[RMDB]
RNA sequence: GGGAACGACUCGAGUAGAGUCGAAAAUACGUGACCUUCGGGUCACGUAACCGGCGUUCCCAAGUCAAAAAGAGAGACGCAAACUCGACAGCGGCCUUUUCGUAUGAGUUGCUUUCGAGCAACUCAACUAACAGCAUGAAUUCGUUCAUGCUGUUAGAAAAGAAACAACAACAACAAC
Reactivity to 2A3 in 0.01 (KOAc 150mM, MgCl2 10mM, bicine 150mM(pH8.5), 24C), signal-to-noise 6, nucleotides 027 to 126: u040a000c010g010u000g010a000c000c000u010u030c280g070g000g000u000c000a000c000g000u000a000a000c020c010g040g020c010g000u010u010c000c010c000a010a010g140u120c050a010a030a030a190a020g060a010g000a010g010a040c020g000c050a100a090a120c050u050c060g040a040c050a040g030c010g030g030c000c020u070u100u080u100c060g030u110a070u140g010a000g000u010u000g010c000u060u070u160c230g050a000g000c000a000a000c010u000c000a000a010
Reactivity to DMS in 0.01 (KOAc 150mM, MgCl2 10mM, bicine 150mM(pH8.5), 24C), signal-to-noise 6, nucleotides 027 to 126: u000a010c000g010u000g010a000c000c000u000u020c240g020g020g020u000c000a010c000g010u000a000a100c070c010g010g000c030g000u000u000c000c000c000a150a100g010u020c180a050a060a070a070a080g000a080g010a060g010a060c020g010c050a060a090a100c060u000c050g000a050c120a100g010c020g000g010c070c020u000u000u000u000c070g010u000a090u000g010a020g020u000u000g000c000u000u000u000c130g020a030g010c000a000a000c000u010c000a020a130